[RMDB]
RNA sequence: GGGAACGACUCGAGUAGAGUCGAAAAGAACCACCCGUAACAUAUUCACCAGCUACAAUUUUAGCUGGUAGUGUCUACACUAAUAGCUGCCUUGUAUCGUCUGAUGGACAACCUGGCGGUGAUGCUAACAGAGGUGCCUUCGGGCACCUCAAAAGAAACAACAACAACAAC
Reactivity to 2A3 in 0.01 (KOAc 150mM, MgCl2 10mM, bicine 150mM(pH8.5), 24C), signal-to-noise 4, nucleotides 027 to 129: g080a010a020c050c010a030c010c010c020g020u040a030a000c040a050u020a130u010u190c020a020c000c000a000g000c000u000a000c080a280a260u160u160u080u030a000g000c000u000g010g000u000a000g000u000g010u000c030u020a030c050a000c050u090a030a140u070a110g040c030u020g030c000c000u050u000g020u060a140u100c020g010u000c050u080g280a110u280g200g000a010c000a020a010c000c010u010g000g000c000g000g010u000g020a000u030g010c050u000a060a060c010a060
Reactivity to DMS in 0.01 (KOAc 150mM, MgCl2 10mM, bicine 150mM(pH8.5), 24C), signal-to-noise 2, nucleotides 027 to 129: g010a080a170c070c050a120c100c000c090g020u000a010a130c160a070u050a060u040u160c090a030c000c030a000g010c000u090a060c090a120a150u000u000u000u000a030g000c000u000g000g000u010a010g010u020g000u040c080u010a020c000a130c110u040a150a150u000a180g000c040u000g020c030c050u060u010g030u000a090u060c120g020u030c030u030g070a090u080g000g000a050c020a030a010c000c000u010g000g040c020g000g050u090g000a050u000g030c150u000a080a060c100a040
Chemical mapping of a 170-nucleotide RNA with 2A3 and DMS. 2A3 adducts were read by reverse transcription with SuperScript II with manganese. The DMS profile rests on 6,265 reads. Reactivities are given for positions 27 through 129. It was measured as part of the RMDB library 15KLIB. DMS adducts were read by reverse transcription with MarathonRT. Conditions: 150 mM KOAc, 10 mM MgCl2 and 150 mM bicine (pH 8.5), 24 C.